[RMDB]
RNA sequence: GGGAACGACUCGAGUAGAGUCGAAAAUUCUCAGCACUCAUCACGAAGUAGGCUUAGGCCAAUUGCUUGGUGGUGAAAGUAGAGGGAAGGUAGCACUUCGACGCCUCUAAGUACGCUGUGGGAGUAGAAAACUGGACAUCGUUCGCGAUGUCCAGAAUCACAGUUAUGACUUCGGUCAUAACUGUGAAAAAGAAACAACAACAACAAC
Reactivity to DMS in 0.01 (KOAc 150mM, MgCl2 10mM, bicine 150mM(pH8.5), 24C), signal-to-noise 2, nucleotides 027 to 156: u000u000c030u000c010a170g020c030a220c120u000c000a020u010c020a020c000g010a030a030g010u000a180g020g010c030u020u000a180g060g060c010c000a090a050u010u000g020c010u020u010g020g060u000g010g050u020g010a040a070a100g040u000a070g010a090g020g000g000a170a060g040g000u000a180g050c140a160c050u000u000c030g030a120c010g020c000c010u020c030u000a060a110g010u000a030c070g000c000u010g000u010g000g020g000a110g030u000a110g010a070a050a120a130c000u000g000g000a040c000a020u000c000g000u000u010c300g000c010g010a010u000g000u010c010c010a000g000a010a120
Reactivity to 2A3 in 0.01 (KOAc 150mM, MgCl2 10mM, bicine 150mM(pH8.5), 24C), signal-to-noise 2, nucleotides 027 to 156: u040u000c010u000c010a020g020c000a010c030u020c000a030u020c000a000c000g150a000a010g000u100a070g030g000c020u100u050a150g120g000c030c010a130a180u290u110g000c010u010u010g130g000u010g000g000u020g000a010a030a000g090u050a010g000a010g030g030g000a010a030g030g020u060a010g080c040a020c080u040u060c050g050a060c080g050c010c000u000c000u000a050a030g030u020a040c120g000c010u020g020u150g050g000g040a090g040u160a050g110a060a110a030a060c000u000g000g000a000c000a000u000c000g010u030u040c150g000c020g120a010u010g000u010c000c000a000g000a010a000